[RMDB]
RNA sequence: GGGAACGACUCGAGUAGAGUCGAAAAAUUGUCCAUGUCAUCAGAUGAACACGCGGACGAGUAUUCGCGUUAUAUCGUAGACGGGGCGGCGGUUGCUGAAAUGAAAGGAAUCAUUGAACGCCAUCAGGCGAAGAUGUAUCUUCGGAUACAUCUUCGCAAAAGAAACAACAACAACAAC
Reactivity to DMS in 0.01 (KOAc 150mM, MgCl2 10mM, bicine 150mM(pH8.5), 24C), signal-to-noise 1, nucleotides 027 to 126: a030u000u000g060u000c000c000a090u010g000u000c000a230u000c160a200g010a030u000g000a090a070c240a050c000g040c030g010g020a070c100g000a150g020u040a190u000u000c050g000c010g020u000u000a140u000a020u000c020g020u000a300g030a030c000g020g020g000g020c070g010g000c020g000g020u000u000g010c050u000g010a090a030a080u020g000a000a040a150g030g010a040a060u000c020a040u000u000g020a120a070c110g000c010c050a070u000c170a070g030
Conditions: 150 mM KOAc, 10 mM MgCl2 and 150 mM bicine (pH 8.5), 24 C.
An RNA of 177 nucleotides, treated with DMS and read out base by base.
DMS adducts were read by reverse transcription with MarathonRT.
The data come from the RNA Mapping Database (RMDB), library RFMREP.